Background: Conditions: 150 mM KOAc, 10 mM MgCl2 and 150 mM bicine (pH 8.5), 24 C. The record gives the reactivity of an RNA of 207 nucleotides to 2A3 and DMS. 2A3 adducts were read by reverse transcription with SuperScript II with manganese. Reactivities are given for positions 27 through 156. For 2A3, 10,068 sequencing reads were counted. For DMS the reverse transcriptase was MarathonRT.
[RMDB]
RNA sequence: GGGAACGACUCGAGUAGAGUCGAAAACGCACCAGUUCCGCUGUGGGUUCGCCUACAAGAACGUACGGUGUUGAGGCCCUGUCCGCCGCUGCGCUGCCACCUACUCUUCGCGCCGCUAGUCGAGCGGACUCCAGGUGGGAGCUUCCCUAUUCUCUCACAACUUAUUAAUGUUCGCAUUAAUAAGUUGAAAAGAAACAACAACAACAAC
Reactivity to 2A3 in 0.01 (KOAc 150mM, MgCl2 10mM, bicine 150mM(pH8.5), 24C), signal-to-noise 7, nucleotides 027 to 156: c060g000c010a010c000c000a010g000u010u000c010c000g020c040u010g000u010g010g020g030u040u050c250g080c060c000u010a020c010a040a110g010a020a000c020g030u130a030c080g000g000u020g010u050u180g050a060g050g040c030c000c030u050g040u050c030c040g010c010c000g020c050u070g020c030g000c040u050g070c020c010a040c020c020u130a120c050u120c090u270u220c140g080c070g020c100c010g010c050u080a060g150u260c080g080a030g010c010g000g010a010c010u010c040c080a030g010g040u030g020g010g010a010g010c000u020u030c020c010c000u070a200u090u060c060u010c000u010c010a030
Reactivity to DMS in 0.01 (KOAc 150mM, MgCl2 10mM, bicine 150mM(pH8.5), 24C), signal-to-noise 3, nucleotides 027 to 156: c100g010c010a040c000c010a280g000u010u000c000c020g040c160u020g010u000g010g010g020u000u010c280g000c040c000u010a030c020a140a090g020a030a040c030g010u010a080c100g050g000u010g050u000u010g010a110g010g010c010c010c000u010g000u000c060c150g030c020c020g050c010u000g010c050g000c010u000g000c040c020a060c060c010u010a120c040u020c040u000u010c050g020c030g000c090c020g030c060u000a100g020u000c040g030a140g000c000g000g010a020c010u000c110c040a090g010g030u010g000g000g010a100g020c050u010u010c000c010c010u000a210u010u000c040u000c010u000c100a300